[RMDB]
RNA sequence: GGGAACGACUCGAGUAGAGUCGAAAAGAAACGCAAGGCCGCUGACCGACGGGAUAUUGUGGGGCUUACCACAGGGGACGCGGCGUUAUCACUUGCCUUUUAAGCCGGCCGUCUGGGCUGCAUACAAACCACCCAACUAUCUUCGGAUAGUUGGGAACUGACGUACGUAGUUCGCUACGUACGUCAGAAAAGAAACAACAACAACAAC
Reactivity to 2A3 in 0.01 (KOAc 150mM, MgCl2 10mM, bicine 150mM(pH8.5), 24C), signal-to-noise 1, nucleotides 027 to 156: g010a030a100a000c070g010c090a030a010g200g000c000c000g020c010u070g050a040c020c020g050a070c110g270g000g000a120u200a040u120u110g010u030g000g030g190g280c030u100u130a020c010c000a010c000a030g010g000g000g050a000c010g000c040g020g010c020g000u020u040a040u050c000a000c130u000u050g000c000c010u020u150u000u090a070a010g040c080c040g000g000c000c000g040u120c060u210g100g000g000c000u020g000c040a000u080a190c010a020a070a050c030c000a040c000c000c000a000a000c000u000a000u010c000u070u050c070g100g000a000u010a000g000u000u000g000g020g000a050a000